[RMDB]
RNA sequence: GGGAACGACUCGAGUAGAGUCGAAAACGACGUUCGCCACCAUCGUGCCGGGGCACGGUUAGCGAGAAACCGCCGACUUCACCGAUUGCCUCGGUGAUGCCGUCGAACAGAUCGGGCCUAUUGUCGAGUGUAAGGUUGGAUUCGUCCAACCUUACACAAAAGAAACAACAACAACAAC
Reactivity to DMS in 0.01 (KOAc 150mM, MgCl2 10mM, bicine 150mM(pH8.5), 24C), signal-to-noise 3, nucleotides 027 to 126: c040g000a050c090g000u010u000c010g020c020c050a140c300c030a020u000c010g030u010g020c030c000g000g000g000g010c010a050c040g000g000u000u000a110g010c020g000a040g000a090a080a110c200c040g010c050c040g000a140c100u000u000c160a040c000c010g010a090u010u000g010c030c030u000c000g000g010u010g010a010u000g010c240c130g000u000c010g000a020a030c020a090g010a130u000c010g010g000g020c020c010u020a080u010u010g010u000c090g000a190
Reactivity to 2A3 in 0.01 (KOAc 150mM, MgCl2 10mM, bicine 150mM(pH8.5), 24C), signal-to-noise 4, nucleotides 027 to 126: c000g020a000c010g000u030u020c000g040c040c040a070c050c010a030u040c020g120u180g060c010c010g010g000g020g010c010a000c000g000g010u000u080a020g010c020g010a040g100a200a090a040c060c030g050c060c030g160a270c040u140u090c080a010c020c000g250a290u050u230g000c010c000u020c000g000g000u020g010a000u000g000c000c020g050u110c010g000a010a010c010a030g040a160u020c000g020g050g020c010c010u120a170u100u190g150u080c070g030a040
Description
Source: RMDB library OK2TST, as collected in RNAgym. Structure probing data (DMS and 2A3) for a 177-nucleotide construct. Values cover nucleotides 27 to 126. The reactions ran in a buffer of 150 mM KOAc, 10 mM MgCl2 and 150 mM bicine (pH 8.5), at 24 C. 2A3 is a SHAPE reagent: it acylates the 2'-hydroxyl of flexible nucleotides of all four kinds.